The record gives the reactivity of an RNA of 177 nucleotides to DMS and 2A3. 2A3 adducts were read by reverse transcription with SuperScript II with manganese. For DMS, 4,318 sequencing reads were counted. The RNA was probed in 150 mM KOAc, 10 mM MgCl2 and 150 mM bicine (pH 8.5) at 24 C.
RNA sequence: GGGAACGACUCGAGUAGAGUCGAAAAGAACCGAGAACGGUAAGACGCGCUAUGGCAAAAGCCGCAAUAGAUCAUACGCCGCAAGUGGCAAGACGGAGAGCGCGCAAAGCGGUAUGAAAGAGAAGAAGAUGAGUAGUACGUUCGCGUACUACUCAUCAAAAGAAACAACAACAACAAC
Reactivity to DMS in 0.01 (KOAc 150mM, MgCl2 10mM, bicine 150mM(pH8.5), 24C), signal-to-noise 3, nucleotides 027 to 126: g010a180a270c020c010g010a110g020a100a090c070g000g000u010a050a040g020a110c040g000c000g000c010u000a080u000g040g000c110a070a060a110a150g010c030c000g020c050a140a050u050a080g000a070u020c030a080u010a120c110g000c050c050g020c110a060a110g010u040g020g000c000a100a120g000a090c030g000g020a080g010a020g010c040g000c020g050c040a010a100a140g010c030g010g000u030a030u000g010a050a120a090g010a030g000a130a190g000a120a110
Reactivity to 2A3 in 0.01 (KOAc 150mM, MgCl2 10mM, bicine 150mM(pH8.5), 24C), signal-to-noise 3, nucleotides 027 to 126: g010a020a000c010c030g030a030g020a190a060c080g040g020u090a010a040g110a030c020g010c000g000c020u040a070u180g080g000c020a030a080a050a000g010c000c000g000c010a040a110u040a080g060a030u030c020a060u050a090c090g020c050c030g010c050a120a050g010u030g060g010c030a040a010g070a010c030g050g000a050g000a000g030c010g000c010g000c010a070a010a000g000c000g010g000u060a070u050g130a120a050a040g110a030g030a080a040g050a110a000